[RMDB]
RNA sequence: GGGAACGACUCGAGUAGAGUCGAAAAUUUCUUCUAUUGUUGACCAAUCGUCGUUCUGUUCGCGAUGCGUAUAGAUCAUUACGUCUUAUUGCUCAUGGAUUAACACCUCUGAUUUUUCUAGUAACCAUAUAUCCACUAUGUUCGCAUAGUGGAUAUAAAAAGAAACAACAACAACAAC
Reactivity to DMS in 0.01 (KOAc 150mM, MgCl2 10mM, bicine 150mM(pH8.5), 24C), signal-to-noise 9, nucleotides 027 to 126: u000u010u010c040u000u000c090u000a120u010u010g010u000u000g000a090c090c060a080a100u000c100g010u000c080g010u000u000c040u000g010u000u000c060g020c040g010a060u000g010c030g020u000a050u000a050g000a070u000c110a080u010u010a050c120g000u000c060u010u010a060u000u010g010c020u000c050a070u000g000g010a090u000u000a060a070c100a060c070c030u000c050u000g010a070u000u000u000u000u000c030u000a080g000u000a070a110c060c040a150
Reactivity to 2A3 in 0.01 (KOAc 150mM, MgCl2 10mM, bicine 150mM(pH8.5), 24C), signal-to-noise 4, nucleotides 027 to 126: u040u020u020c010u100u010c040u090a130u070u210g060u060u120g040a040c040c020a040a090u060c030g020u000c010g030u060u030c020u040g060u060u060c020g000c030g040a050u090g010c010g030u040a070u050a110g080a070u080c040a100u090u120a030c020g000u020c030u060u100a100u040u090g010c020u020c050a040u070g030g040a090u010u080a030a030c020a050c010c030u040c020u040g080a120u000u080u000u040u050c010u020a060g050u070a090a030c000c030a050

About this RNA
Conditions: 150 mM KOAc, 10 mM MgCl2 and 150 mM bicine (pH 8.5), 24 C. This 177-nucleotide RNA was probed chemically with DMS and 2A3. For 2A3, 4,070 sequencing reads were counted.